RNA sequence: GGGAACGACUCGAGUAGAGUCGAAAAGAUAUGGAGUAUGGAGAGCCUAUGGUGCGUUGAAAGGAGCCUAGAUUCGGAAACGAAUCUAGGCUCCUGGAGCACCCUAGGCUCCCAUACUCCUAAGUCACAUAAAGAACUUGUUCGCAAGUUCUUUAUGAAAAGAAACAACAACAACAAC
Reactivity to DMS in 0.01 (KOAc 150mM, MgCl2 10mM, bicine 150mM(pH8.5), 24C), signal-to-noise 2, nucleotides 027 to 126: g010a030u010a300u000g010g010a040g000u000a000u000g020g010a180g020a020g010c020c010u000a000u010g010g030u000g020c000g000u010u020g010a180a210a070g000g000a030g020c020c000u010a000g010a020u020u020c010g020g000a140a090a300c030g010a040a000u000c000u000a000g010g030c000u000c010c000u010g000g010a120g010c010a000c010c000c040u000a000g000g010c000u010c000c000c000a000u000a020c010u000c000c000u000a000a060g000u000c040a300
An RNA of 177 nucleotides, treated with DMS and read out base by base. DMS adducts were read by reverse transcription with MarathonRT. The DMS profile rests on 2,086 reads.